[RMDB]
RNA sequence: GGGAACGACUCGAGUAGAGUCGAAAACGCUGAGAUUUGUGCCUCGUUGAUGGCGCAGGCGGCGGAAAACGACGCAUCGCUGUUUGCCCUGCCGGAAGCAUUGCUGGCGCGCGAUGAUCAUGAUGCAGCAGUGACACAAUUUCGAUUGUGUCACUGCAAAAGAAACAACAACAACAAC
Reactivity to 2A3 in 0.01 (KOAc 150mM, MgCl2 10mM, bicine 150mM(pH8.5), 24C), signal-to-noise 2, nucleotides 027 to 126: c010g000c020u030g050a080g080a300u210u150u070g000u040g020c000c010u090c020g190u080u170g070a190u120g010g050c000g000c020a000g000g030c000g000g030c040g020g100a040a070a020a020c090g070a020c060g000c060a020u000c000g000c020u080g030u110u030u080g040c000c000c030u050g010c010c000g070g020a070a010g030c050a060u030u270g030c000u000g010g030c020g000c030g020c020g030a060u040g010a010u040c030a120u100g090a040u100g000c040a020
Reactivity to DMS in 0.01 (KOAc 150mM, MgCl2 10mM, bicine 150mM(pH8.5), 24C), signal-to-noise 2, nucleotides 027 to 126: c020g020c010u010g000a070g020a150u000u000u000g080u010g000c000c030u000c160g020u000u030g010a060u000g040g020c010g010c010a010g020g020c000g010g000c020g000g000a030a050a110a100c140g000a070c140g020c040a010u000c010g040c060u010g000u000u020u000g000c050c020c000u000g040c020c010g000g010a080a190g020c070a060u000u000g010c050u020g000g000c010g020c150g030c060g000a040u010g000a120u000c040a090u000g000a040u000g000c040a220